The record gives the reactivity of an RNA of 177 nucleotides to DMS and 2A3. The 2A3 profile rests on 997 reads. Conditions: 150 mM KOAc, 10 mM MgCl2 and 150 mM bicine (pH 8.5), 24 C.
RNA sequence: GGGAACGACUCGAGUAGAGUCGAAAACUCAGGAGAAUGAGGUGGGAAGAUUACUUGAGCCCAGGAGUUUGUGGUUACAGUGAGCUAUGGUCAUGCCACUGCACUCCAGCCUGCAUGACUGAAAGAAACAGACCGUGAGAUUCGUCUCACGGUCUGUAAAAGAAACAACAACAACAAC
Reactivity to DMS in 0.01 (KOAc 150mM, MgCl2 10mM, bicine 150mM(pH8.5), 24C), signal-to-noise 2, nucleotides 027 to 126: c050u000c010a070g070g020a050g030a070a050u010g010a090g010g010u010g020g020g000a120a060g010a110u000u000a090c110u010u010g000a130g000c030c030c030a070g000g000a030g010u000u030u000g020u010g010g010u000u000a060c050a070g010u000g030a130g030c080u000a180u010g000g000u010c030a040u010g000c010c200a040c020u010g000c190a070c080u010c010c000a060g000c050c050u010g000c030a040u000g010a030c010u010g010a030a110a110g010a080a100
Reactivity to 2A3 in 0.01 (KOAc 150mM, MgCl2 10mM, bicine 150mM(pH8.5), 24C), signal-to-noise 1, nucleotides 027 to 126: c040u020c030a030g000g210a120g090a090a160u190g000a040g040g020u050g080g000g020a080a000g000a050u110u100a110c080u050u060g040a020g060c020c010c060a020g010g000a020g020u040u110u120g000u040g000g100u050u090a100c010a080g010u000g010a030g040c030u090a130u270g030g060u050c000a000u020g010c000c010a040c020u010g000c020a000c020u000c000c020a030g000c020c000u040g020c000a030u050g030a030c000u010g040a000a170a030g060a040a080